[RMDB]
RNA sequence: GGGAACGACUCGAGUAGAGUCGAAAAGCCGUCGUACGCGACGGCACAAGUUCGUGAGAACUUGACACUGCGCGUGAGCGCAGUGACAACAGGCUUCGGCCUGUUGAGGAGAGCUACGGCUCUCCAAGUCGUCCUCUACGGAGGACGACAGCGAGCGUUCGCGCUCGCAAGUCUAAAGUUUGCUAGGGUUCCGCGUCAUAGGUGGUCUGGUCCAAGAGCAAACGGCUUUCACAAAGCCACACGGAAGGAUAAAAGCCUGGGAGAUUACAGGUCAAUUCGUUGACCUGAAAAGAAACAACAACAACAAC
Reactivity to 2A3 in 0.01 (KOAc 150mM, MgCl2 10mM, bicine 150mM(pH8.5), 24C), signal-to-noise 1, nucleotides 027 to 266: g000c000c010g030u000c000g010u020a050c270g010c000g120a000c020g010g000c000a000c010a000a000g000u000u060c000g000u070g170a090g000a010a000c000u010u000g030a020c000a000c010u000g000c000g010c030g010u070g030a020g010c010g000c010a000g010u000g040a010c010a000a000c000a000g000g020c000u110u230c240g190g020c000c000u000g000u010u010g000a020g000g000a010g000a000g010c000u000a090c240g130g000c000u040c010u030c010c000a010a010g020u000c000g000u000c000c010u060c000u010a060c260g170g000a000g010g000a000c000g000a010c000a000g050c000g000a000g010c000g000u030u190c230g060c020g030c150u000c000g000c000a000a020g060u060c050u170a230a020a000g060u050u000u040g030c020u000a000g010g010g000u030u090c020c020g040c000g020u110c140a250u140a270g110g040u070g020g000u110c110u100g000g000u000c000c010a000a000g000a000g020c010a010a010a010c010g000g000c000u090u070u080c110a090c060a110a010a030g010c060c010a060c020a000c010g000g090a030a010g010g000a010u080a260a020a010a010g000c000c000u000g110g110g000a030g000a010u010u180a050